The record gives the reactivity of an RNA of 177 nucleotides to 2A3 and DMS. DMS (dimethyl sulfate) methylates the pairing face of unpaired adenines and cytosines. For DMS the reverse transcriptase was MarathonRT. Source: RMDB libraries RFM100 and RFMREP, as collected in RNAgym. Values cover nucleotides 27 to 126. The RNA was probed in 150 mM KOAc, 10 mM MgCl2 and 150 mM bicine (pH 8.5) at 24 C.
RNA sequence: GGGAACGACUCGAGUAGAGUCGAAAAAUAAAAGUAUCUCAUCAGGUAUAUUUAAAUUACACGGUAGUUAAGGAGGUAACGAUAAGUUGAGUAAUUUUAACAUCAUGGGAUCUUUAAUGCUUAUAGCCUUAUUUACGACGUUCGCGUCGUAAAUAAGAAAAGAAACAACAACAACAAC
Reactivity to 2A3 in 0.01 (KOAc 150mM, MgCl2 10mM, bicine 150mM(pH8.5), 24C), signal-to-noise 6, nucleotides 027 to 126: a000u130a000a030a010a010g040u030a050u000c010u000c010a040u050c070a030g000g050u040a050u000a030u120u090u050a070a080a010u030u030a030c030a000c030g030g010u040a060g020u120u040a070a050g090g020a040g060g100u030a020a000c010g020a100u030a170a090g050u050u070g060a030g040u020a020a060u030u040u010u100a050a020c010a050u080c000a030u050g000g000g010a000u000c010u020u110u070a110a040u100g020c000u080u160a080u130a150g040c000
Reactivity to DMS in 0.01 (KOAc 150mM, MgCl2 10mM, bicine 150mM(pH8.5), 24C), signal-to-noise 3, nucleotides 027 to 126: a060u030a060a020a040a120g000u020a030u000c000u000c030a040u010c160a080g000g020u010a080u020a050u020u010u000a040a050a020u010u010a030c030a060c030g010g000u000a070g010u000u000a070a130g000g020a070g010g010u000a010a020c050g000a100u070a050a060g010u000u000g000a100g010u030a030a040u010u030u020u010a020a080c100a050u010c120a040u000g000g000g000a010u010c020u000u010u020a040a060u000g010c070u000u030a040u010a080g000c140